An RNA of 207 nucleotides, treated with DMS and 2A3 and read out base by base. It was measured as part of the RMDB library OK3TST. For 2A3, 15,704 sequencing reads were counted. Conditions: 150 mM KOAc, 10 mM MgCl2 and 150 mM bicine (pH 8.5), 24 C.

RNA sequence: GGGAACGACUCGAGUAGAGUCGAAAAUGCUACAGGGCCGCCGUGCACAUCCAUUCAUAUGACGUGGUGUCAGAUACGUAAAGAUGCAAACAUGUCAGUGCUUCAUUCCUGUCUCAUCACCUAAGGGGCACAGGGCACCUGUGGUCUGCAGUGGUGAGAGUAAUACGGUAUUCGUACCGUAUUACUCAAAAGAAACAACAACAACAAC
Reactivity to DMS in 0.01 (KOAc 150mM, MgCl2 10mM, bicine 150mM(pH8.5), 24C), signal-to-noise 4, nucleotides 027 to 156: u000g000c010u000a050c020a100g030g010g010c060c050g040c050c010g040u000g030c050a070c040a120u010c030c020a290u000u010c100a200u000a110u000g030a090c060g020u000g010g030u000g020u010c080a080g000a150u010a050c090g040u020a080a100a080g010a060u000g000c050a030a080a080c050a040u010g010u000c210a150g030u000g000c020u000u010c020a100u000u000c030c020u010g010u010c050u000c020a060u000c020a040c020c040u010a120a130g020g010g010g020c010a030c020a060g000g030g030c020a050c020c010u000g010u010g020g010u010c050u000g010c090a080g020u000g010g010u010g000a170
Reactivity to 2A3 in 0.01 (KOAc 150mM, MgCl2 10mM, bicine 150mM(pH8.5), 24C), signal-to-noise 9, nucleotides 027 to 156: u140g000c000u010a010c010a020g010g010g020c050c030g110c050c040g050u020g010c040a040c020a160u060c040c010a050u070u220c080a070u150a110u300g080a080c080g020u030g000g020u020g050u090c060a010g010a040u050a050c070g040u070a050a070a050g020a020u040g020c040a030a150a060c050a120u170g100u280c070a050g060u020g050c000u030u040c010a070u100u090c010c010u010g010u010c010u000c010a030u020c000a010c010c010u040a090a080g020g000g010g000c010a010c010a010g030g030g000c050a220c120c000u000g000u000g010g050u010c050u070g030c040a040g040u050g040g020u030g030a050